Overview: An RNA of 177 nucleotides, treated with DMS and 2A3 and read out base by base. The DMS profile rests on 8,496 reads. The reactions ran in a buffer of 150 mM KOAc, 10 mM MgCl2 and 150 mM bicine (pH 8.5), at 24 C. It was measured as part of the RMDB library OK2TST. In probing experiments dimethyl sulfate is read out at A N1 and C N3, which are open when not base-paired. For 2A3 the reverse transcriptase was SuperScript II with manganese. 2A3 is a SHAPE reagent: it acylates the 2'-hydroxyl of flexible nucleotides of all four kinds. DMS adducts were read by reverse transcription with MarathonRT.
RNA sequence: GGGAACGACUCGAGUAGAGUCGAAAAUCAAUCAAAGUUCAGAGACCGACUGAUUGUACUGAAUUUAGGAGAAGUCAAGUUGUAUCACCAAUGGAAAUAGCCUUGGUCUUUCGAAUCAGCCUAAAACAAUGUUGAAAGAUUUCGAUCUUUCAACAUUAAAAGAAACAACAACAACAAC
Reactivity to DMS in 0.01 (KOAc 150mM, MgCl2 10mM, bicine 150mM(pH8.5), 24C), signal-to-noise 7, nucleotides 027 to 126: u000c050a080a100u010c050a080a100a110g020u000u000c040a070g000a140g000a070c090c060g020a070c100u000g010a050u000u010g020u000a100c020u000g000a060a080u000u000u010a080g010g000a080g000a080a070g010u010c060a040a080g010u010u010g010u000a050u010c080a080c080c040a050a070u000g020g000a050a080a080u000a100g010c060c010u000u000g000g010u000c020u000u000u000c050g010a060a060u000c050a070g000c020c030u000a040a050a080a090c200
Reactivity to 2A3 in 0.01 (KOAc 150mM, MgCl2 10mM, bicine 150mM(pH8.5), 24C), signal-to-noise 4, nucleotides 027 to 126: u020c020a010a010u040c030a090a090a090g020u060u040c050a030g090a040g060a220c030c040g050a030c030u070g030a080u060u070g010u040a020c010u030g050a070a100u070u050u090a110g010g040a050g020a090a020g060u040c020a030a020g020u080u090g100u120a070u050c020a020c090c010a030a050u120g060g010a090a120a090u060a040g020c000c010u000u010g000g030u010c000u020u040u010c020g010a040a050u040c010a010g070c030c020u080a070a070a010a030c060